[RMDB]
RNA sequence: GGGAACGACUCGAGUAGAGUCGAAAACACGGCUAUGACUGUGUCAGACGACACGGCCACAAAAACAGCUAAUACUACUGCAAUCUUCGGUUAUGGCAAUUUGCCAUCUAUGGAGAUUAAUCUCACUGCAAAUUUGCAGCGUACGUUUUUGUGGUCAUAGAUGUCAUACGUUCGCGUAUGACAUCUAAAAAGAAACAACAACAACAAC
Reactivity to DMS in 0.01 (KOAc 150mM, MgCl2 10mM, bicine 150mM(pH8.5), 24C), signal-to-noise 2, nucleotides 027 to 156: c010a050c020g010g020c030u010a090u000g040a060c010u010g000u000g020u000c030a140g020a200c110g000a120c010a060c060g010g000c000c000a020c000a000a020a000a020a010c020a160g000c050u000a170a150u000a130c040u000a060c000u010g000c070a020a020u010c050u000u000c010g010g010u000u000a020u010g000g030c020a090a250u010u010u010g040c020c000a010u000c060u000a150u010g020g010a000g010a050u000u000a060a170u000c050u000c020a060c000u010g010c070a050a100a160u010u000u000g000c000a010g020c120g010u000a080c100g000u000u010u000u000u000g020u000g010g020u000c010a120
Reactivity to 2A3 in 0.01 (KOAc 150mM, MgCl2 10mM, bicine 150mM(pH8.5), 24C), signal-to-noise 7, nucleotides 027 to 156: c030a010c020g080g000c100u230a160u300g080a290c040u050g010u010g020u030c040a080g050a250c080g020a010c050a020c090g000g000c000c010a000c000a000a000a000a000a000c020a020g080c120u190a120a070u050a190c050u030a030c010u040g010c030a010a020u010c060u030u030c020g050g020u140u080a010u010g000g000c030a170a300u120u150u300g000c010c000a000u020c010u110a200u180g020g000a010g000a000u060u080a040a110u070c040u010c040a020c020u040g060c080a020a100a240u110u140u050g000c000a000g000c000g050u060a050c050g010u010u000u000u010u000g000u010g000g000u000c000a000
Chemical mapping of a 207-nucleotide RNA with DMS and 2A3. The reactions ran in a buffer of 150 mM KOAc, 10 mM MgCl2 and 150 mM bicine (pH 8.5), at 24 C. For 2A3 the reverse transcriptase was SuperScript II with manganese. It was measured as part of the RMDB library OK3TST.